[RMDB]
RNA sequence: GGGAACGACUCGAGUAGAGUCGAAAAUGCUAGUCUUCUCACAGAUCGCACCUAUAAGCCAAGGGGUGGGAAAUCGGAACUCUGCAAAGGACCCCAGUCCGGAUUGGCGAAGGGCAGCAUCUACGCACCGAUUACGGAUAUUCGUAUCCGUAAUCGGAAAAGAAACAACAACAACAAC
Reactivity to DMS in 0.01 (KOAc 150mM, MgCl2 10mM, bicine 150mM(pH8.5), 24C), signal-to-noise 2, nucleotides 027 to 126: u010g020c020u020a060g020u000c060u000u000c000u000c030a180c190a040g010a050u000c190g070c030a190c020c000u010a050u000a080a300g000c000c000a030a040g020g000g000g000u020g000g000g000a050a070a120u000c100g020g030a120a090c050u000c060u010g000c160a050a130a160g000g000a070c120c010c010c000a080g000u000c000c020g010g010a200u000u000g040g010c010g030a080a100g000g010g020c010a050g030c030a040u000c020u010a150c170g000c090a140
Reactivity to 2A3 in 0.01 (KOAc 150mM, MgCl2 10mM, bicine 150mM(pH8.5), 24C), signal-to-noise 2, nucleotides 027 to 126: u060g010c010u030a050g010u050c020u010u000c020u030c020a040c030a050g060a030u040c070g000c000a070c030c000u080a060u020a230a060g000c020c010a020a060g000g030g000g010u030g010g030g010a110a150a070u100c020g050g060a070a080c020u030c060u260g050c070a170a060a040g040g020a010c050c010c000c020a020g110u000c010c010g050g140a220u080u070g010g000c030g000a030a020g000g010g000c040a020g000c000a010u020c010u040a040c070g020c020a030